[RMDB]
An RNA of 177 nucleotides, treated with DMS and 2A3 and read out base by base. For DMS the reverse transcriptase was MarathonRT. Conditions: 150 mM KOAc, 10 mM MgCl2 and 150 mM bicine (pH 8.5), 24 C.

RNA sequence: GGGAACGACUCGAGUAGAGUCGAAAAAUUUUUAAGGGUUCUAACUAGUUCAUUAACGUCAUGACCAUCUACCGGACCAAUGUAAUUAAAGCCUAAUUCUUCAAACAUGGUGCCCGGUACAACCAUGCACCGCAGGUGAAUUCGUUCACCUGCGGUGAAAAGAAACAACAACAACAAC
Reactivity to DMS in 0.01 (KOAc 150mM, MgCl2 10mM, bicine 150mM(pH8.5), 24C), signal-to-noise 1, nucleotides 027 to 126: a110u040u020u020u010u030a110a070g050g040g010u000u020c020u030a050a010c020u010a070g010u000u000c020a030u000u020a130a070c040g000u010c060a060u050g010a080c030c130a030u010c070u000a020c030c020g020g000a140c070c080a000a030u020g000u020a030a050u010u010a050a040a070g000c120c070u020a090a070u000u070c020u020u000c160a190a070a070c080a040u000g000g000u000g000c160c000c000g040g000u000a070c170a010a120c000c010a010u020g010
Reactivity to 2A3 in 0.01 (KOAc 150mM, MgCl2 10mM, bicine 150mM(pH8.5), 24C), signal-to-noise 2, nucleotides 027 to 126: a000u100u140u060u060u110a110a100g040g010g030u160u110c050u000a020a060c040u060a060g100u100u090c050a050u230u150a110a070c050g070u070c060a060u110g070a060c040c010a030u000c000u010a000c000c000g050g000a010c050c000a120a140u150g020u180a060a080u100u070a090a010a050g050c050c020u110a130a090u050u060c020u030u010c090a150a090a020c020a020u010g000g000u150g040c000c000c010g020g000u000a020c000a000a020c000c100a020u060g080